[RMDB]
RNA sequence: GGGAACGACUCGAGUAGAGUCGAAAAGUUCAUCCCCUGAUCAAGGAUGCCCGAAACGGUGAGGCGGAAAGCAAAUUAAACAACGUCAACCCAUCGGGACGGUUGGCCAGUUAAGAAGUGAGGAUUCAAAAGAUCGAACCGUUCGCGGUUCGAUCAAGACGGCAAUAGGGUUCGCCCUAUUGCCGUCAAAAGAAACAACAACAACAAC
Reactivity to 2A3 in 0.01 (KOAc 150mM, MgCl2 10mM, bicine 150mM(pH8.5), 24C), signal-to-noise 1, nucleotides 027 to 156: g000u010u130c010a030u030c040c000c000c010u090g010a090u000c030a000a000g060g000a050u150g000c000c030c040g170a110a150a040c070g030g010u100g030a090g020g000c020g040g020a230a010a000g060c040a080a080a070u210u150a090a030a000c020a030a000c010g020u000c020a010a010c050c000c000a030u030c000g010g000g010a000c020g010g020u030u030g030g030c000c020a040g010u030u060a110a060g020a120a070g050u080g070a020g050g020a020u090u130c050a010a010a010a010g020a000u000c000g010a000a000c000c000g030u090u080c160g010c020g060g000u000u000c000g000a000u000c000a000a010